[RMDB]
RNA sequence: GGGAACGACUCGAGUAGAGUCGAAAAGAUAUGGACUGAGGCAACAGCCAUAGGGUCGGAAACGACCCUGAUGGACAUGCCUUGGUCCUAAGUCAAAGCGAAUAGCCUCUUCGGAGGCUAUUCGCAACUCAUGUAAUUGGUUCGCCAAUUACAUGAGAAAAGAAACAACAACAACAAC
Reactivity to 2A3 in 0.01 (KOAc 150mM, MgCl2 10mM, bicine 150mM(pH8.5), 24C), signal-to-noise 1, nucleotides 027 to 126: g000a000u030a010u060g000g000a010c000u010g020a000g000g000c010a040a050c080a300g150c010c010a010u010a010g000g000g020u000c000g000g000a040a010a010c010g000a000c000c040c000u010g020a010u000g000g020a070c020a060u010g010c000c000u000u000g010g000u000c000c000u010a010a000g000u000c030a080a100a050g010c000g000a000a010u000a000g000c030c010u010c000u060u120c300g100g000a000g000g000c010u000a000u000u000c000g000c000a000a010
Reactivity to DMS in 0.01 (KOAc 150mM, MgCl2 10mM, bicine 150mM(pH8.5), 24C), signal-to-noise 4, nucleotides 027 to 126: g010a020u010a210u010g000g010a010c000u000g010a000g000g000c000a030a150c300a140g000c000c000a010u000a010g000g010g010u000c010g000g000a050a040a070c000g010a020c000c000c000u000g000a010u000g000g000a170c120a130u000g000c000c000u000u000g000g010u000c000c000u000a010a060g000u000c020a080a110a140g000c010g010a020a000u000a010g000c000c000u000c000u000u010c160g030g000a020g010g000c000u000a000u000u000c000g020c000a010a010
The record gives the reactivity of an RNA of 177 nucleotides to 2A3 and DMS. For 2A3 the reverse transcriptase was SuperScript II with manganese. It was measured as part of the RMDB library TTRDEL.